[RMDB]
RNA sequence: GGGAACGACUCGAGUAGAGUCGAAAAUUAGUAUCGUGGUUGCAAGGACAACUUUAGGCCUUGUAGUUUUAGUGGUACAGCAAAUCAUGCCUAAUUUAAGUUGAGAUCUUACUUAGUGUCAAAUUAACCUAAAGAAAGCAUUCGUGCUUUCUUUAGGAAAAGAAACAACAACAACAAC
Reactivity to 2A3 in 0.01 (KOAc 150mM, MgCl2 10mM, bicine 150mM(pH8.5), 24C), signal-to-noise 5, nucleotides 027 to 126: u090u020a040g020u010a010u050c030g010u030g020g010u010u020g000c000a000a000g020g000a030c010a080a070c070u180u140u160a090g060g000c010c000u010u000g010u000a020g020u010u020u060u130a100g030u040g020g020u020a020c020a010g010c030a070a060a050u100c030a040u110g010c010c000u040a080a100u090u090u040a050a040g040u060u080g110a060g010a110u040c020u030u030a030c010u000u020a040g020u030g040u150c020a030a010a230u150u140a080a080
Reactivity to DMS in 0.01 (KOAc 150mM, MgCl2 10mM, bicine 150mM(pH8.5), 24C), signal-to-noise 9, nucleotides 027 to 126: u000u000a080g010u000a060u000c020g040u000g000g010u010u000g000c020a050a050g010g010a050c030a130a130c230u010u010u010a120g010g000c010c030u000u000g010u010a040g010u000u000u000u000a080g020u010g020g010u000a020c040a160g010c120a040a060a060u010c080a050u000g000c180c010u000a020a030u000u000u000a040a070g020u000u010g010a150g000a080u000c030u000u010a050c140u000u000a050g010u010g000u010c090a050a070a110u000u000a070a180